[RMDB]
RNA sequence: GGGAACGACUCGAGUAGAGUCGAAAAACACCAAAACUGAAAACGGAAGGCAAUACUUCCACGACGAUACUUACUUUCCUUUGAUCGUCGUUACUACUGGCAUAGCCACAAAGGAGAACAAACAUGAGCGCGGACACUGACUUCGGUCAGUGUCCAACUUGCAUUAUUCGUUCGCGAAUAAUGCAAGAAAAGAAACAACAACAACAAC
Reactivity to DMS in 0.01 (KOAc 150mM, MgCl2 10mM, bicine 150mM(pH8.5), 24C), signal-to-noise 1, nucleotides 027 to 156: a080c070a110c040c000a060a040a050a260c100u020g020a040a030a060a050c000g030g000a040a020g020g000c070a220a060u020a100c050u010u000c000c020a110c040g020a020c000g000a070u020a000c000u000u000a030c090u000u000u020c020c040u020u000u010g000a090u000c000g050u010c020g040u000u000a050c050u000a060c010u010g070g000c140a190u000a100g000c000c000a020c050a030a060a040g000g000a040g020a050a100c140a090a110a060c050a060u000g010a110g000c050g000c110g030g060a060c010a000c000u010g000a050c000u010u010c180g060g060u030c000a010g020u000g000u000c010c000a000a020
Reactivity to 2A3 in 0.01 (KOAc 150mM, MgCl2 10mM, bicine 150mM(pH8.5), 24C), signal-to-noise 6, nucleotides 027 to 156: a000c070a100c020c040a070a060a030a060c120u210g060a070a060a040a030c060g000g020a010a010g040g000c100a140a090u070a200c010u010u000c000c010a010c000g000a000c000g010a000u110a190c020u070u030a040c010u070u180u080c020c000u050u000u030g020a010u010c010g000u000c000g000u030u020a020c030u030a030c000u000g030g030c070a250u100a120g020c010c010a040c050a040a040a000g030g010a030g020a070a030c060a100a090a020c090a120u210g080a050g110c130g020c070g050g000a000c000a000c010u010g000a010c000u060u080c200g040g000u000c010a000g000u010g000u010c000c000a000a000